[RMDB]
RNA sequence: GGGAACGACUCGAGUAGAGUCGAAAAGGCGUAGCAGGGUCGUCCGACGCGUCGAAGGACGAGAGUAAGGCGUACAUAGGCACAGAGACAGCGCGGAACACACGUUUGCACAGCCUGCACGUGGCGGCAUGGCCCCGUGGUUCGCCACGGGGCCAUGAAAAGAAACAACAACAACAAC
Reactivity to 2A3 in 0.01 (KOAc 150mM, MgCl2 10mM, bicine 150mM(pH8.5), 24C), signal-to-noise 1, nucleotides 027 to 126: g000g010c010g000u020a100g010c050a010g080g000g020u000c040g080u000c000c000g030a030c050g030c070g060u100c000g120a030a030g080g000a080c060g000a030g010a000g060u060a090a000g120g030c020g000u000a000c040a060u180a120g000g060c060a000c000a030g040a000g050a060c050a190g000c010g000c040g000g060a170a000c030a000c000a000c080g000u010u100u080g040c060a020c000a170g020c000c050u000g030c050a080c000g000u000g050g010c080g010g000
Reactivity to DMS in 0.01 (KOAc 150mM, MgCl2 10mM, bicine 150mM(pH8.5), 24C), signal-to-noise 1, nucleotides 027 to 126: g000g000c000g000u000a100g000c080a100g000g000g040u000c030g010u000c000c010g000a210c090g070c030g080u000c000g030a090a240g010g000a070c020g000a020g040a080g000u030a060a120g020g040c000g000u000a070c120a130u040a130g010g010c090a090c020a000g050a210g000a200c030a000g000c040g000c040g000g010a080a130c170a300c170a040c020g000u000u020u020g050c030a060c160a240g120c120c020u040g050c070a060c050g000u020g000g060c070g000g010

An RNA of 177 nucleotides, treated with 2A3 and DMS and read out base by base. For 2A3, 635 sequencing reads were counted. The data come from the RNA Mapping Database (RMDB), library OK1LIB. For DMS, 1,068 sequencing reads were counted. The RNA was probed in 150 mM KOAc, 10 mM MgCl2 and 150 mM bicine (pH 8.5) at 24 C.